Chemical mapping of a 207-nucleotide RNA with DMS and 2A3.
Values are in units of 0.01, from 0 to 300, in steps of 10.
2A3 adducts were read by reverse transcription with SuperScript II with manganese.
The RNA was probed in 150 mM KOAc, 10 mM MgCl2 and 150 mM bicine (pH 8.5) at 24 C.
RNA sequence: GGGAACGACUCGAGUAGAGUCGAAAAAUGCCUUUAAUCCCAACACUUCGGGAGGCCGAGGCAGGUGGAUCACUUGAGGCCGGGAGUUUGAGACCAGCCUGGCCAGCAUGGCAAAACCGCGUCUCUACUAAAAAUACAAAAAAUUAGCCAGGCAUGGCAUUUCUUCUUGAUUCGUCAAGAAGAAAUGAAAAGAAACAACAACAACAAC
Reactivity to DMS in 0.01 (KOAc 150mM, MgCl2 10mM, bicine 150mM(pH8.5), 24C), signal-to-noise 1, nucleotides 027 to 156: a020u010g000c030c000u010u000u000a140a130u000c020c000c020a120a080c050a060c050u010u000c000g020g030g000a070g030g050c070c030g010a040g030g030c000a030g010g030u010g020g010a060u000c030a050c030u010u010g000a080g060g040c020c020g080g000g000a060g040u000u000u000g020a100g000a060c010c020a050g020c020c020u000g030g040c010c020a020g000c010a060u020g000g000c050a030a040a080a190c040c010g000c080g000u000c000u000c000u000a130c020u010a000a050a040a050a060u010a180c020a010a030a070a090a190a140u010u000a080g020c000c020a030g040g050c000a130u000g000g000
Reactivity to 2A3 in 0.01 (KOAc 150mM, MgCl2 10mM, bicine 150mM(pH8.5), 24C), signal-to-noise 2, nucleotides 027 to 156: a000u040g010c020c000u070u050u100a040a060u020c010c010c020a020a050c110a060c150u140u190c060g040g000g000a000g040g000c050c040g010a010g010g000c010a020g060g000u060g040g060a120u120c050a040c090u050u130g020a010g020g000c000c000g060g000g020a070g010u020u140u140g060a080g010a000c040c010a010g010c000c000u000g010g000c060c000a000g020c010a060u090g070g000c000a000a010a000a100c050c020g000c040g040u000c020u000c010u030a040c030u100a030a010a010a060a090u220a040c080a040a070a060a060a030a140u120u070a060g000c000c000a010g000g020c060a100u010g020g000